[RMDB]
RNA sequence: GGGAACGACUCGAGUAGAGUCGAAAAGAUAUGGAAGCGAAUCUUUGUUAAGACUACCUACCCACCCUCAGCAUCGGAAACGAUGUAGAGGAGGGUAGUCUUAACAAAGAAAUGUGCUUCCUAAGUCCUCUCCCUUUACGUUCGCGUAAAGGGAGAGAAAAGAAACAACAACAACAAC
Reactivity to DMS in 0.01 (KOAc 150mM, MgCl2 10mM, bicine 150mM(pH8.5), 24C), signal-to-noise 2, nucleotides 027 to 126: g000a090u040a300u010g000g010a010a070g010c030g000a300a140u030c000u030u010u030g000u000u000a000a010g010a000c000u000a000c040c020u020a150c030c020c180a300c140c000c000u000c000a300g000c000a020u000c010g000g000a060a130a210c000g020a000u000g020u000a140g010a060g000g000a090g040g000g010u000a000g000u000c010u000u000a010a000c000a000a000a000g000a000a040a030u000g020u030g010c000u000u000c000c000u010a060a250g000u000c060
Reactivity to 2A3 in 0.01 (KOAc 150mM, MgCl2 10mM, bicine 150mM(pH8.5), 24C), signal-to-noise 1, nucleotides 027 to 126: g050a060u200a080u240g020g000a010a030g000c050g050a150a120u000c000u000u040u000g010u010u000a000a030g000a000c010u020a020c000c000u120a150c060c090c060a090c010c040c000u010c040a060g000c000a010u010c000g040g040a070a100a060c000g010a000u010g030u030a070g000a000g000g000a000g000g010g010u000a000g000u050c000u020u000a000a010c010a000a000a000g000a000a030a000u140g010u070g030c000u000u020c000c010u000a110a000g050u030c010
Chemical mapping of a 177-nucleotide RNA with DMS and 2A3. The reactions ran in a buffer of 150 mM KOAc, 10 mM MgCl2 and 150 mM bicine (pH 8.5), at 24 C. For DMS, 1,009 sequencing reads were counted. Source: RMDB library TTRINS, as collected in RNAgym. 2A3 adducts were read by reverse transcription with SuperScript II with manganese.